[RMDB]
The data come from the RNA Mapping Database (RMDB), library M2RFPK.
Structure probing data (DMS and 2A3) for a 207-nucleotide construct.
RNA sequence: GGGAACGACUCGAGUAGAGUCGAAAAAGUUAGGUUCGCUAUGGUGCAACUCUUUAAGGCAAUAACGAACUAAUUCUAAGCAAGUAAUGGAGAAAUGCCAGGGUCACUAUCUAGCCAUAAUAGUACUGUAAGUGACUUAGAUUCGUCUAAGUCACAAUGUGAUGUACUACUUCGGUAGUACAUCACAAAAAGAAACAACAACAACAAC
Reactivity to DMS in 0.01 (KOAc 150mM, MgCl2 10mM, bicine 150mM(pH8.5), 24C), signal-to-noise 2, nucleotides 027 to 156: a090g010u000u000a070g010g010u000u000c030g050c010u010a040u000g020g030u010g000c030a080a100c110u000c070u000u000u000a040a080g040g010c030a130a040u000a040a060c010g000a050a040c020u010a030a040u000u000c060u000a120a170g060c040a060a110g020u010a040a030u000g000g020a110g010a080a050a060u000g010c000c000a160g030g000g020u000c070a040c040u000a050u000c030u000a090g000c020c030a080u040a070a060u000a040g020u000a090c070u010g000u010a050a140g040u000g000a010c000u000u010a000g000a030u000u020c250g050u010c010u010a020a010g010u000c000a000c000a010a060
Reactivity to 2A3 in 0.01 (KOAc 150mM, MgCl2 10mM, bicine 150mM(pH8.5), 24C), signal-to-noise 4, nucleotides 027 to 156: a010g090u070u050a030g000g080u010u010c020g030c020u030a010u070g130g030u060g060c080a100a130c050u100c110u090u150u170a180a050g040g000c000a010a040u100a090a080c030g040a010a000c020u030a020a000u060u110c040u120a050a040g070c030a140a000g010u190a100a070u110g060g000a040g030a100a060a040u070g020c020c000a020g010g000g010u040c020a000c010u030a040u150c010u030a040g010c000c010a010u050a080a010u030a050g070u020a060c040u090g060u140a130a070g000u020g000a000c000u000u010a000g010a010u050u020c100g040u000c150u000a000a000g000u000c010a000c000a010a010